[RMDB]
Structure probing data (DMS and 2A3) for a 177-nucleotide construct. The DMS profile rests on 870 reads. DMS (dimethyl sulfate) methylates the pairing face of unpaired adenines and cytosines.
RNA sequence: GGGAACGACUCGAGUAGAGUCGAAAAACUGGAGCUCUAGAACUCCCUAAAAUUGAGCUGGAGUUAGAUCCUAAUGAGAAAAAGAACCUUCAAAGGAGAAAUAUGGAGUCUGAUGAUGCAACAAAUGCUGUAGGUAGAAGUUCGCUUCUACCUACAGAAAAGAAACAACAACAACAAC
Reactivity to DMS in 0.01 (KOAc 150mM, MgCl2 10mM, bicine 150mM(pH8.5), 24C), signal-to-noise 2, nucleotides 027 to 126: a070c040u010g000g030a100g000c010u000c010u020a110g040a270a130c080u010c010c000c060u000a050a080a080a090u010u000g030a020g010c030u010g010g000a140g000u000u010a090g000a150u000c010c000u000a080a090u000g000a220g000a050a060a080a100a080g010a170a230c100c030u010u000c130a050a040a130g020g010a130g010a070a090a050u010a050u010g000g010a070g000u000c030u000g000a070u000g010a080u000g000c040a020a030c070a080a080a050u020g000
Reactivity to 2A3 in 0.01 (KOAc 150mM, MgCl2 10mM, bicine 150mM(pH8.5), 24C), signal-to-noise 1, nucleotides 027 to 126: a000c000u020g080g050a000g000c000u000c020u050a090g020a200a090c030u000c010c000c000u000a060a080a190a280u000u060g000a000g050c030u000g030g020a140g030u030u030a090g080a060u010c000c000u040a250a070u200g120a090g140a060a220a060a000a220g170a140a120c030c020u070u130c140a130a080a000g090g000a140g060a030a150a000u140a090u170g000g030a000g110u050c050u000g030a030u020g000a050u140g030c050a070a070c000a000a170a040u200g040